[RMDB]
RNA sequence: GGGAACGACUCGAGUAGAGUCGAAAAUCACAAAGCGGAUUUAGCUCGGUUGGGAGAGGUCCAGACCGAAGAUCUGGAAUUCCUGUGUCCGAGACACAGAAUUCGCACCAUAAACAACGGGAGAUUCAUGGUGAGCUAGUUUCGACUAGCUCACCAUAAAAGAAACAACAACAACAAC
Reactivity to DMS in 0.01 (KOAc 150mM, MgCl2 10mM, bicine 150mM(pH8.5), 24C), signal-to-noise 2, nucleotides 027 to 126: u000c070a190c130a010a090a110g020c000g000g000a000u000u000u050a110g010c020u000c030g030g000u000u020g010g000g000a010g010a000g020g020u000c020c000a000g010a030c030c070g000a230a150g060a260u030c000u000g000g010a030a090u070u000c000c020u010g020u030g050u040c000c010g000a030g020a030c140a090c240a090g000a010a000u000u000c000g030c000a180c050c130a040u020a000a100a020c120a080a060c050g000g000g000a200g000a090u080u000c200
Reactivity to 2A3 in 0.01 (KOAc 150mM, MgCl2 10mM, bicine 150mM(pH8.5), 24C), signal-to-noise 2, nucleotides 027 to 126: u080c000a000c090a060a070a000g000c000g000g010a020u040u040u040a000g040c010u030c010g000g020u050u200g090g000g000a070g030a090g040g160u000c000c000a000g000a010c030c190g220a040a060g090a060u000c010u000g010g000a000a000u000u000c000c000u080g070u020g090u090c000c010g000a000g110a020c000a000c000a020g030a000a000u030u000c000g040c000a020c030c030a060u270a060a150a010c100a030a040c050g050g030g000a080g000a120u110u110c040